This 207-nucleotide RNA was probed chemically with DMS and 2A3. Values cover nucleotides 27 to 156. Conditions: 150 mM KOAc, 10 mM MgCl2 and 150 mM bicine (pH 8.5), 24 C. For 2A3 the reverse transcriptase was SuperScript II with manganese. Source: RMDB library OK3TST, as collected in RNAgym. Reactivities are rounded to 0.1 and cut off at 0 and 3. For DMS the reverse transcriptase was MarathonRT. The DMS profile rests on 19,800 reads.
RNA sequence: GGGAACGACUCGAGUAGAGUCGAAAAUCAAAUAUCGCAUCUUAAAUUGGAUUUUGAUGGAUUAGUUGAAGCACAAAGGGUGUAUGGCGUACUAUGAUGAAUUUAACUGAUAUAAUUGAUAAUUGUCUUGAAAAUGAUACUGGCGAUCAUAGAGCGCGCAUAUGUGAUAAUUCGUUAUCACAUAUGCAAAAGAAACAACAACAACAAC
Reactivity to DMS in 0.01 (KOAc 150mM, MgCl2 10mM, bicine 150mM(pH8.5), 24C), signal-to-noise 7, nucleotides 027 to 156: u000c030a050a080a090u010a060u000c040g050c060a060u000c080u020u000a040a090a160u010u000g010g010a200u000u000u000u000g020a070u000g000g020a220u000u000a050g020u000u000g010a070a130g010c040a080c060a060a070a100g000g020g040u000g030u000a070u010g020g020c030g020u010a170c050u000a050u010g010a080u000g020a110a140u000u000u010a050a090c050u000g010a050u000a060u000a030a080u000u000g000a140u010a050a110u000u010g010u000c090u010u000g010a090a070a050a070u000g010a070u000a020c040u000g000g030c020g010a070u000c020a060u000a050g010a300g020c020g020c100
Reactivity to 2A3 in 0.01 (KOAc 150mM, MgCl2 10mM, bicine 150mM(pH8.5), 24C), signal-to-noise 9, nucleotides 027 to 156: u040c010a030a030a010u190a020u050c030g050c100a040u020c050u150u210a140a200a170u140u120g070g010a050u030u030u020u110g040a050u030g010g030a040u060u060a050g030u010u070g040a050a010g030c040a010c040a090a100a060g050g040g010u040g000u040a100u070g040g000c010g010u030a030c010u010a020u050g020a020u020g030a060a090u060u120u110a100a040c040u020g030a010u040a030u040a250a110u120u050g010a010u040a180a080u110u030g040u020c020u040u050g060a080a090a070a080u090g020a030u030a130c040u050g080g000c040g020a000u010c010a000u020a040g070a010g050c040g000c010